[RMDB]
RNA sequence: GGGAACGACUCGAGUAGAGUCGAAAACGCGAAAUAGAAUUCUGGUAUGUAUUUACAUGGCGUGUCUGUUCGCAGUGUACUUACGAGAAUAAAGAUAGACUAAGCAUGUAGCGCCUAUGGUUGGAUUGCUCUUGGACGCGGGUUCAAAUCCCGCCAGCCUAUAUUGUAAGUUCGCUUACAAUAUAGGAAAAGAAACAACAACAACAAC
Reactivity to 2A3 in 0.01 (KOAc 150mM, MgCl2 10mM, bicine 150mM(pH8.5), 24C), signal-to-noise 3, nucleotides 027 to 156: c070g040c020g060a050a020a050u180a090g110a080a100u070u040c030u090g050g010u100a060u080g010u020a060u080u200u060a050c050a060u080g100g000c050g030u090g080u070c080u130g160u090u060c010g000c040a020g020u000g020u060a040c020u050u020a020c050g060a010g030a130a020u140a130a100a020g080a030u130a010g030a020c050u070a050a070g030c020a050u080g020u070a010g030c000g080c040c020u090a110u140g080g000u010u030g020g010a090u000u060g000c010u000c020u030u050g020g000a030c050g000c010g000g000g010u010u050c010a050a030a040u050c000c000c020g000c010c000a000g020
Reactivity to DMS in 0.01 (KOAc 150mM, MgCl2 10mM, bicine 150mM(pH8.5), 24C), signal-to-noise 2, nucleotides 027 to 156: c050g030c050g030a110a090a150u000a130g010a130a140u000u000c020u020g000g030u000a040u000g010u000a040u000u000u010a030c000a040u010g000g040c020g040u010g010u000c090u010g020u000u010c020g040c000a100g000u010g010u000a020c050u000u000a020c030g010a120g010a080a070u000a070a110a140g010a100u000a080g010a050c060u000a060a130g010c080a080u000g030u000a130g020c090g010c030c040u000a090u010g020g030u000u000g010g000a160u010u000g010c030u000c110u000u000g020g010a110c070g000c020g020g000g000u000u010c200a080a170a100u000c020c000c010g010c020c030a050g000

An RNA of 207 nucleotides, treated with 2A3 and DMS and read out base by base. For 2A3 the reverse transcriptase was SuperScript II with manganese. The reactions ran in a buffer of 150 mM KOAc, 10 mM MgCl2 and 150 mM bicine (pH 8.5), at 24 C. Source: RMDB library ARCHII, as collected in RNAgym. DMS adducts were read by reverse transcription with MarathonRT.